[RMDB]
An RNA of 177 nucleotides, treated with DMS and 2A3 and read out base by base. The RNA was probed in 150 mM KOAc, 10 mM MgCl2 and 150 mM bicine (pH 8.5) at 24 C. High DMS reactivity at an A or C suggests that its Watson-Crick edge is free.

RNA sequence: GGGAACGACUCGAGUAGAGUCGAAAAGGCCACUUCUUCGGAAGUGGCCAAAGGGAAACCAAGCAGUACGUUCGUAUUCGUACAGCAAAAAUAAAUACGAAAAAAGACUCAGCUUCGGCUGAGUCAAGUUAUAAUUUGAGUUCGCUCAAAUUAUAACAAAAGAAACAACAACAACAAC
Reactivity to DMS in 0.01 (KOAc 150mM, MgCl2 10mM, bicine 150mM(pH8.5), 24C), signal-to-noise 3, nucleotides 027 to 126: g020g020c000c000a010c010u000u000c000u000u010c200g020g000a020a010g020u000g000g030c000c000a010a020a050g020g010g000a160a050a300c010c000a100a160g020c160a100g000u000a000c000g000u000u000c010g020u020a000u000u000c000g020u000a010c000a120g010c200a010a050a040a070a020u010a000a020a000u000a000c010g000a010a110a090a110a120a110g000a010c000u000c010a000g010c010u000u010c160g020g010c000u000g010a010g000u000c010a000a020
Reactivity to 2A3 in 0.01 (KOAc 150mM, MgCl2 10mM, bicine 150mM(pH8.5), 24C), signal-to-noise 3, nucleotides 027 to 126: g000g000c010c000a000c010u000u030c000u020u050c150g120g000a000a000g000u000g000g020c000c000a000a000a000g000g000g010a020a020a030c010c000a020a020g080c040a020g040u010a000c000g000u010u020c010g000u010a010u010u010c000g000u000a010c030a100g070c020a070a100a080a010a000u090a030a010a000u020a020c000g000a080a010a010a010a000a020g010a000c000u000c000a000g010c010u070u180c260g130g010c000u000g010a000g000u000c000a010a000
DMS adducts were read by reverse transcription with MarathonRT.